[RMDB]
Chemical mapping of a 207-nucleotide RNA with 2A3. The RNA was probed in 150 mM KOAc, 10 mM MgCl2 and 150 mM bicine (pH 8.5) at 24 C.

RNA sequence: GGGAACGACUCGAGUAGAGUCGAAAAUCCUAAGUCUCGCGAUUCAGUAAGAGGGUUGGCGAGCUUCGGAAACGAAGCGAUGAGCCAACCUACCCACCUUACUGGGCGAGAUAUGGAAAAAUCUACCCACCAUCAGUUCGCUGAUGGUGGGUAGAAAGUGGUUAUCCAUGUUCGCAUGGAUAACCACAAAAGAAACAACAACAACAAC
Reactivity to 2A3 in 0.01 (KOAc 150mM, MgCl2 10mM, bicine 150mM(pH8.5), 24C), signal-to-noise 1, nucleotides 027 to 156: u000c000c000u020a070a010g010u000c000u000c000g000c050g300a300u300u060c010a000g020u010a010a010g000a020g010g000g000u000u000g000g000c020g030a040g000c020u000u000c010g000g020a100a070a100c020g000a010a010g000c020g080a260u150g070a000g000c000c000a000a000c000c000u000a000c000c000c030a140c010c010u010u000a000c000u000g000g010g000c000g000a010g000a000u010a050u060g000g000a070a050a030a000a000u000c000u000a000c000c000c000a000c010c000a000u000c000a000g130u060u220c210g000c090u000g000a000u000g000g010u010g000g000g000u000a000g000a000a000a000